This 177-nucleotide RNA was probed chemically with DMS and 2A3. Reactivities are given for positions 27 through 126. The reactions ran in a buffer of 150 mM KOAc, 10 mM MgCl2 and 150 mM bicine (pH 8.5), at 24 C. 2A3 adducts were read by reverse transcription with SuperScript II with manganese.
[RMDB]
RNA sequence: GGGAACGACUCGAGUAGAGUCGAAAACUGGGGGGUGUUAGAAGUUAGUCACUUAGAAGGUCGUCGCAAGAUUGGCAAUUUAGGUGAAAAACGGACAAAACCAACUCCGGAUCAAUAUGCUGAGAUCAUGUCAGGAUCAAUUCGUUGAUCCUGACAUAAAAGAAACAACAACAACAAC
Reactivity to DMS in 0.01 (KOAc 150mM, MgCl2 10mM, bicine 150mM(pH8.5), 24C), signal-to-noise 3, nucleotides 027 to 126: c040u010g040g000g010g010g020g000u000g030u010u010a040g000a300a150g000u000u010a050g020u000c000a000c010u000u010a010g000a010a070g030g020u000c000g010u000c020g000c300a080a100g020a000u000u040g000g020c010a000a040u000u010u000a000g000g000u010g000a000a000a000a000a000c010g000g010a250c120a010a010a040a050c030c040a060a080c040u000c000c000g000g000a050u020c120a050a080u020a070u010g030c110u010g020a140g020a040u000c070
Reactivity to 2A3 in 0.01 (KOAc 150mM, MgCl2 10mM, bicine 150mM(pH8.5), 24C), signal-to-noise 4, nucleotides 027 to 126: c040u020g000g000g000g010g000g000u110g050u020u040a020g020a110a010g000u020u040a020g040u000c000a000c010u000u020a000g000a030a000g040g000u010c000g000u000c000g000c030a020a030g010a060u300u300g040g000c010a010a040u000u000u020a010g040g000u000g000a050a040a020a000a000c000g010g020a020c040a010a170a000a010c020c000a030a110c010u020c000c030g050g000a040u040c020a030a140u090a040u300g080c070u080g060a100g010a160u110c040